[RMDB]
RNA sequence: GGGAACGACUCGAGUAGAGUCGAAAACCAACUCUGUUUUCGCCUUUGCCCCUUCAUCAUUAUACAAAAUGUCUACCAUUACCACACCCACACAUUGAUAUUAUGACUAAUUGUUUAUUAGCUAAGUUCCUUACUGGGCAUUCGUGCCCAGUAAGGAAAAAGAAACAACAACAACAAC
Reactivity to 2A3 in 0.01 (KOAc 150mM, MgCl2 10mM, bicine 150mM(pH8.5), 24C), signal-to-noise 2, nucleotides 027 to 126: c000c010a010a030c110u050c020u020g070u100u070u010u000c040g050c020c000u000u100u050g000c000c010c010c010u050u000c000a060u030c000a030u090u110a050u040a080c090a000a000a060a060u000g030u010c000u000a050c010c010a030u030u070a020c000c020a000c000a000c040c000c000a000c000a000c000a030u050u080g070a020u020a040u140u100a040u110g050a030c010u020a050a110u040u040g080u070u090u080a130u000u090a010g020c030u060a020a070g110u000
An RNA of 177 nucleotides, treated with 2A3 and read out base by base. It was measured as part of the RMDB library RFM100. The RNA was probed in 150 mM KOAc, 10 mM MgCl2 and 150 mM bicine (pH 8.5) at 24 C. Reactivities are given for positions 27 through 126.